The record gives the reactivity of an RNA of 177 nucleotides to DMS and 2A3. 2A3 adducts were read by reverse transcription with SuperScript II with manganese. The reactions ran in a buffer of 150 mM KOAc, 10 mM MgCl2 and 150 mM bicine (pH 8.5), at 24 C. It was measured as part of the RMDB library OK2TRN. In probing experiments dimethyl sulfate is read out at A N1 and C N3, which are open when not base-paired.
[RMDB]
RNA sequence: GGGAACGACUCGAGUAGAGUCGAAAAUUCAUAUGGAUCAACUACACGUUCAGAGUUCAUCCGAAGAUCUUCCACUGACUCAGGUAUAUCGGGAAACUCUCUCAGAGGGUUGUACUCUACGUGGAGCGUAUCUGGAACUUUUCGAAGUUCCAGAUACAAAAGAAACAACAACAACAAC
Reactivity to DMS in 0.01 (KOAc 150mM, MgCl2 10mM, bicine 150mM(pH8.5), 24C), signal-to-noise 2, nucleotides 027 to 126: u010u000c060a130u020a160u000g010g010a150u010c080a090a170c040u000a040c010a030c020g010u010u010c200a020g000a040g000u000u000c090a110u010c000c000g010a050a090g000a060u010c060u000u000c030c070a080c100u010g000a070c140u000c140a030g000g000u000a080u010a070u010c040g000g010g000a140a050a020c010u000c020u010c030u010c160a140g010a060g000g010g010u000u000g010u000a030c010u000c000u000a030c010g010u010g000g000a030g000c200
Reactivity to 2A3 in 0.01 (KOAc 150mM, MgCl2 10mM, bicine 150mM(pH8.5), 24C), signal-to-noise 3, nucleotides 027 to 126: u040u040c030a020u140a110u200g180g030a080u130c060a040a080c020u070a050c060a000c020g080u150u190c100a010g000a000g010u050u030c060a100u030c050c000g000a030a020g010a060u020c020u080u000c060c010a080c130u160g100a080c030u080c190a040g040g020u060a100u030a030u220c030g040g000g000a040a000a020c010u040c010u000c010u070c090a090g010a010g040g040g030u020u040g010u050a010c010u000c000u020a010c030g000u010g000g010a010g030c050